An RNA of 177 nucleotides, treated with DMS and 2A3 and read out base by base. Conditions: 150 mM KOAc, 10 mM MgCl2 and 150 mM bicine (pH 8.5), 24 C. The DMS profile rests on 901 reads. It was measured as part of the RMDB library M2PK50.
[RMDB]
RNA sequence: GGGAACGACUCGAGUAGAGUCGAAAAUCUAGUGGCUUCGGCCACUAGAAAACCUAGUCAAAAUAACGCAAGACUAGGAAAGCGAAAGUACGAAUGUACAAAAAAGCUUACACUUCGGUGUAAGCAACAGCAUAACUGUGUUCGCACAGUUAUGCUGAAAAGAAACAACAACAACAAC
Reactivity to DMS in 0.01 (KOAc 150mM, MgCl2 10mM, bicine 150mM(pH8.5), 24C), signal-to-noise 1, nucleotides 027 to 126: u000c000u000a000g030u000g000g030c000u000u000c130g100g000c030c000a030c000u010a000g000a050a050a140a060c000c000u000a000g000u000c010a080a100a130a170u010a130a120c190g000c090a140a180g010a000c000u000a000g000g000a020a050a170g010c080g000a120a120a130g010u000a010c010g000a130a160u020g030u000a020c040a030a030a040a090a090a060g000c000u030u000a020c010a000c000u010u000c230g030g040u000g010u010a000a020g000c030a040a000
Reactivity to 2A3 in 0.01 (KOAc 150mM, MgCl2 10mM, bicine 150mM(pH8.5), 24C), signal-to-noise 3, nucleotides 027 to 126: u010c000u000a000g010u000g020g010c000u010u020c190g100g000c000c000a000c000u000a000g000a000a000a000a010c000c000u010a000g010u000c010a010a080a060a300u140a260a070c080g070c140a140a050g000a000c010u000a000g000g060a080a040a000g080c050g090a190a050a010g000u010a000c010g110a300a120u300g000u050a030c050a000a130a000a040a010a020g000c000u000u010a000c000a000c000u020u110c250g090g000u020g000u000a000a000g000c000a000a010